[RMDB]
RNA sequence: GGGAACGACUCGAGUAGAGUCGAAAAAUCGAUCGAUCACUAGGUAUCAUGUACUCAUGCUCAUGCUAGGUACGAUCGUACAUGGUACGAUAGGUACCUCUAGGUCUAGGUACGCUAGCUAGAGCGCAAUGUUGACGUCAUUCGUGACGUCAACAUUAAAAGAAACAACAACAACAAC
Reactivity to 2A3 in 0.01 (KOAc 150mM, MgCl2 10mM, bicine 150mM(pH8.5), 24C), signal-to-noise 3, nucleotides 027 to 126: a000u100c040g040a030u040c050g020a020u070c000a030c100u070a030g050g040u060a010u060c020a020u100g030u050a060c030u010c100a050u190g000c010u000c030a040u110g010c000u060a010g010g000u040a020c030g010a030u030c030g000u000a010c030a190u170g110g000u030a010c020g030a080u090a080g140g030u020a010c000c010u010c060u070a090g010g040u000c030u030a040g000g130u050a040c050g010c140u000a000g000c000u020a040g000a010g030c060g000c060
Reactivity to DMS in 0.01 (KOAc 150mM, MgCl2 10mM, bicine 150mM(pH8.5), 24C), signal-to-noise 3, nucleotides 027 to 126: a080u010c060g020a060u010c060g000a090u020c070a100c110u020a060g020g000u000a020u000c040a070u000g010u000a070c040u000c090a070u000g030c010u020c100a150u000g010c100u020a030g000g010u010a030c070g010a010u000c030g010u000a010c030a120u000g020g030u000a000c000g010a030u000a050g010g010u000a010c030c010u000c100u010a060g010g020u010c060u010a050g000g000u000a040c090g020c000u000a010g000c040u000a220g010a040g010c060g000c270